[RMDB]
RNA sequence: GGGAACGACUCGAGUAGAGUCGAAAAGAUAUGGACUCAUCCUGGGUGGAGAUGGAGUCGGAAACGACUCACAUCGCUGACCAGGAGUGAGUCCUAAGUCAAAGGCCAACUAGUUCGCUAGUUGGCCCUUCCUCCACUCGUUCGCGAGUGGAGGAAGAAAAGAAACAACAACAACAAC
Reactivity to 2A3 in 0.01 (KOAc 150mM, MgCl2 10mM, bicine 150mM(pH8.5), 24C), signal-to-noise 2, nucleotides 027 to 126: g000a030u070a030u190g010g000a020c000u000c000a010u000c010c030u030g010g020g080u210g100g020a020g000a000u010g000g020a000g020u010c030g000g000a090a120a010c000g050a020c000u000c070a300c010a100u010c000g000c050u110g100a040c010c000a000g000g000a000g020u050g010a000g000u000c000c010u030a040a000g020u010c060a150a070a020g030g050c000c000a000a000c020u010a000g070u110u080c300g000c280u000a000g020u020u000g000g040c030c000
Reactivity to DMS in 0.01 (KOAc 150mM, MgCl2 10mM, bicine 150mM(pH8.5), 24C), signal-to-noise 2, nucleotides 027 to 126: g010a050u000a300u020g000g020a020c000u010c000a080u000c010c000u000g000g020g000u000g000g020a050g000a020u000g000g020a030g000u000c000g000g020a150a080a300c000g000a030c000u000c000a080c010a000u000c020g000c010u000g000a040c000c010a050g000g000a020g020u000g010a020g000u000c000c000u010a000a100g000u010c080a080a130a140g000g020c010c000a000a000c000u000a000g000u000u020c260g020c010u000a010g010u000u000g000g010c020c000